[RMDB]
RNA sequence: GGGAACGACUCGAGUAGAGUCGAAAAGGGACGCCAACAAGCUCACCGGCAAAGAGGUGCUGAUUAUCGGCACUCAGGGCGGCAUCCGCGCCGGAGACGGACGCCCAAUCGCGCUGGGCUACCACACCUUUUUACGGACUUUCGAGUCCGUAAAAAGAAAAGAAACAACAACAACAAC
Reactivity to 2A3 in 0.01 (KOAc 150mM, MgCl2 10mM, bicine 150mM(pH8.5), 24C), signal-to-noise 1, nucleotides 027 to 126: g040g000g010a020c070g050c050c010a070a050c080a180a000g020c020u040c010a050c020c000g020g020c050a070a100a110g100a050g050g000u010g000c000u000g010a130u100u300a140u300c040g000g000c020a000c020u030c010a010g000g030g000c000g000g000c010a110u000c000c010g000c020g000c010c030g020g000a030g040a020c010g020g010a000c010g040c020c010c000a010a080u070c060g000c020g010c050u040g020g000g000c010u050a050c000c010a040c000a030c030
Reactivity to DMS in 0.01 (KOAc 150mM, MgCl2 10mM, bicine 150mM(pH8.5), 24C), signal-to-noise 2, nucleotides 027 to 126: g000g010g010a050c140g000c020c020a100a100c240a070a030g020c040u000c020a050c050c000g000g000c060a090a150a110g020a110g000g030u000g000c040u000g030a210u010u010a070u020c020g020g010c030a030c030u010c090a100g010g000g020c020g000g020c100a140u000c000c030g020c170g020c030c040g000g010a220g020a160c010g000g010a040c070g020c000c020c000a040a110u000c090g000c080g000c070u000g000g000g000c000u000a140c040c020a100c190a080c060